An RNA of 177 nucleotides, treated with DMS and read out base by base. Conditions: 150 mM KOAc, 10 mM MgCl2 and 150 mM bicine (pH 8.5), 24 C. Values cover nucleotides 27 to 126. For DMS, 604 sequencing reads were counted. The data come from the RNA Mapping Database (RMDB), library OK2TST. Values are in units of 0.01, from 0 to 300, in steps of 10.

[RMDB]
RNA sequence: GGGAACGACUCGAGUAGAGUCGAAAAUGCCGCGAGACCAUUUCGUGGAUUGAGGAUAAGAAGCGCAUCCUUACCGAGACCGACAGUCUGGAGAUGGAUCUGACCGGUGUGAUGACCCUGCAGCGUACAGGUAUGGGAGCUUCGGCUCCCAUACCUGAAAAGAAACAACAACAACAAC
Reactivity to DMS in 0.01 (KOAc 150mM, MgCl2 10mM, bicine 150mM(pH8.5), 24C), signal-to-noise 1, nucleotides 027 to 126: u000g000c010c020g040c000g010a160g000a000c070c070a000u000u000u020c040g050u010g000g030a080u000u040g010a240g000g000a070u000a160a010g000a050a080g010c030g000c180a130u000c100c010u000u000a100c070c010g000a070g000a070c100c090g000a130c080a050g010u000c000u020g010g000a060g010a040u010g000g000a150u010c010u010g000a200c300c010g040g000u040g020u000g000a180u000g010a170c030c000c000u020g000c090a000g000c120g000u000a130